[RMDB]
RNA sequence: GGGAACGACUCGAGUAGAGUCGAAAAGAAAGGCAGCGAGUGCAGCCCACGCAGCGGCAUGCUUUUGCAUGCCCAGUCGAGCCCACGACUCAGGGCAGCUGCGGCACUGAGGGCAGCUGCCGAAAGACCAUACGGACCAUUUCGAUGGUCCGUAUGGAAAAGAAACAACAACAACAAC
Reactivity to DMS in 0.01 (KOAc 150mM, MgCl2 10mM, bicine 150mM(pH8.5), 24C), signal-to-noise 2, nucleotides 027 to 126: g010a150a130a090g000g020c030a020g000c000g000a110g020u000g040c120a180g000c000c020c050a180c090g000c030a030g020c040g020g010c030a020u000g000c000u000u000u000u010g030c000a050u010g010c000c000c040a030g020u000c020g000a150g020c020c000c010a260c000g000a040c050u000c120a140g000g000g040c120a090g000c030u010g000c020g000g000c170a070c190u000g000a050g000g010g000c010a210g000c020u010g000c000c010g020a020a020a130g030a220
Reactivity to 2A3 in 0.01 (KOAc 150mM, MgCl2 10mM, bicine 150mM(pH8.5), 24C), signal-to-noise 2, nucleotides 027 to 126: g040a030a110a010g010g020c000a010g000c020g100a070g170u250g040c150a020g030c010c030c010a000c000g020c040a020g010c040g020g000c020a000u010g040c000u250u260u300u300g000c030a000u000g000c000c020c000a000g030u030c000g000a040g020c000c020c000a030c000g060a010c030u080c170a060g010g000g060c010a030g000c010u000g000c000g000g040c080a060c170u130g040a120g000g000g000c020a020g000c000u020g020c000c000g010a000a010a000g020a030
Structure probing data (DMS and 2A3) for a 177-nucleotide construct.
For DMS, 1,633 sequencing reads were counted.
Reactivities are given for positions 27 through 126.
The RNA was probed in 150 mM KOAc, 10 mM MgCl2 and 150 mM bicine (pH 8.5) at 24 C.
For 2A3, 2,482 sequencing reads were counted.